RNA sequence: GGGAACGACUCGAGUAGAGUCGAAAAGUGGCGGUAGAUAUCUCCUCAGACAUGAGAUUAAUGGUGAAGAUGUCAUGAUCAUUGUAAAGCGAAGAGAGGAUAAGGUUUCAGAUGUUCUCGAUGAAGACAGAUAUCGCUGUUUCGACAGCGAUAUCUGAAAAGAAACAACAACAACAAC
Reactivity to DMS in 0.01 (KOAc 150mM, MgCl2 10mM, bicine 150mM(pH8.5), 24C), signal-to-noise 3, nucleotides 027 to 126: g000u010g030g000c070g050g000u010a020g000a130u040a070u010c020u010c020c030u000c100a100g000a040c160a100u020g030a030g000a050u010u020a060a100u020g020g010u010g030a040a130g010a060u000g000u000c060a060u030g000a100u010c030a070u010u000g020u020a060a080a090g020c050g000a020a090g000a100g000a060g000g010a040u010a090a070g010g000u010u000u010c050a040g010a110u000g000u000u010c030u010c010g000a180u020g000a080a060g020a150
Reactivity to 2A3 in 0.01 (KOAc 150mM, MgCl2 10mM, bicine 150mM(pH8.5), 24C), signal-to-noise 4, nucleotides 027 to 126: g050u050g060g010c030g000g000u050a050g020a040u140a070u060c010u030c030c010u020c050a070g030a110c030a100u090g010a070g040a060u070u100a140a100u130g060g080u100g060a100a050g050a080u010g030u020c040a060u110g070a140u100c040a060u040u110g060u170a130a010a000g050c000g040a120a000g080a090g000a030g040g000a010u050a040a060g020g070u030u000u000c020a040g060a210u120g070u090u030c010u010c040g110a150u220g060a020a020g120a070